[RMDB]
RNA sequence: GGGAACGACUCGAGUAGAGUCGAAAACUUGCUUUCGAGCAAGGUCAAAGAUAUGGAGGGUUGUCAGACUGAUCUACUCUUGGACCUCGGAAACGAGCUAGAGUAGGUUUGGUCUUGGAUUUACCCUCCUAAGUCAAUAAUGCGUAUUCGUACGCAAACCUUACACCUACUUCGGUAGGUGUAAGGUAAAAGAAACAACAACAACAAC
Reactivity to 2A3 in 0.01 (KOAc 150mM, MgCl2 10mM, bicine 150mM(pH8.5), 24C), signal-to-noise 3, nucleotides 027 to 156: c000u000u000g010c040u120u050u200c290g120a020g000c000a000a000g000g030u090c030a180a240a030g030a050u080a060u090g000g010a010g030g000g010u020u070g000u020c000a000g000a000c010u010g000a000u000c000u010a000c000u000c010u040u090g110g130a210c000c010u000c010g040g020a040a090a070c010g010a010g010c000u020a000g000a000g020u020a010g010g020u010u070u120g010g000u000c000u000u010g020g010a010u160u100u100a030c000c000c000u000c000c000u000a000a000g000u000c000a010a060u190a210a100u150g000c000g000u000a040u000u230c250g050u070a010c000g000c000a020a010
Reactivity to DMS in 0.01 (KOAc 150mM, MgCl2 10mM, bicine 150mM(pH8.5), 24C), signal-to-noise 2, nucleotides 027 to 156: c010u000u010g020c000u000u000u000c240g050a070g030c010a040a040g000g020u010c050a090a100a150g000a210u000a200u010g000g000a040g040g000g010u000u000g000u000c050a100g000a060c010u000g020a040u000c000u000a010c000u000c000u000u020g040g000a080c300c000u010c010g010g000a080a140a180c020g010a040g000c030u000a020g010a010g050u010a020g010g000u000u000u000g050g030u000c010u020u010g020g010a020u010u000u020a060c010c000c030u000c010c000u010a000a060g020u000c070a060a130u000a090a180u000g010c000g010u000a040u010u020c250g050u000a020c010g040c000a000a100
The record gives the reactivity of an RNA of 207 nucleotides to 2A3 and DMS. The 2A3 profile rests on 2,216 reads. The RNA was probed in 150 mM KOAc, 10 mM MgCl2 and 150 mM bicine (pH 8.5) at 24 C. It was measured as part of the RMDB library RNAMAK.